[RMDB]
RNA sequence: GGGAACGACUCGAGUAGAGUCGAAAAGUCUAGCGAAGGGAUCCCACCCGGGACACACGCAAGUCGCGAAUUACGCCGACCGGCCAAGGUCAAUAGCAGAACUCAACUGCAUGAGUAAGCUAGACGACCUACCUAAUGCUUUCGAGCAUUAGGUAGGAAAAGAAACAACAACAACAAC
Reactivity to DMS in 0.01 (KOAc 150mM, MgCl2 10mM, bicine 150mM(pH8.5), 24C), signal-to-noise 3, nucleotides 027 to 126: g030u000c020u010a040g010c010g010a130a110g000g040g000a070u020c000c000c000a300c080c020c000g010g000g000a040c040a070c080a160c210g010c060a200a040g020u000c010g020c010g030a290a140u020u010a100c050g030c050c010g020a050c020c300g020g040c030c090a080a140g000g000u000c000a110a090u000a070g020c000a020g000a030a070c160u010c160a060a070c030u000g000c050a090u000g000a090g000u000a080a180g000c000u000a000g010a040c080g010a120
Reactivity to 2A3 in 0.01 (KOAc 150mM, MgCl2 10mM, bicine 150mM(pH8.5), 24C), signal-to-noise 3, nucleotides 027 to 126: g000u000c000u010a000g000c030g070a160a180g070g000g000a020u010c000c000c010a090c000c010c040g000g010g010a030c030a010c000a000c070g010c020a060a000g020u030c000g020c010g080a130a240u300u130a100c040g060c070c060g040a010c010c010g030g000c030c040a130a060g010g020u020c010a040a080u080a090g000c010a000g030a140a050c050u060c220a080a080c010u040g000c000a050u070g010a010g110u050a020a010g000c000u010a010g000a010c000g010a000